[RMDB]
RNA sequence: GGGAACGACUCGAGUAGAGUCGAAAACAAUGCUGGCUGACAUACAACGGAAGUUAUCUAAAUGAAACCCACUUUAGGAAUGAUUGGCUGCUAGAAAGUCAACAACUAUACAAUGACAUGCUAGUCAGGCGCCUAAUGAGUUCGCUCAUUAGGCGCCAAAAGAAACAACAACAACAAC
Reactivity to 2A3 in 0.01 (KOAc 150mM, MgCl2 10mM, bicine 150mM(pH8.5), 24C), signal-to-noise 1, nucleotides 027 to 126: c080a000a000u140g060c020u000g000g000c000u000g000a000c000a000u200a020c020a300a000c000g060g110a000a050g000u020u000a150u090c000u180a090a020a020u050g120a260a090a120c000c000c000a070c000u070u000u020a030g070g030a120a060u170g230a300u000u060g010g000c240u080g000c000u140a050g130a160a040a000g010u000c000a000a020c000a030a020c290u130a080u060a110c080a000a000u190g030a030c000a110u060g080c100u000a080g060u020c000a000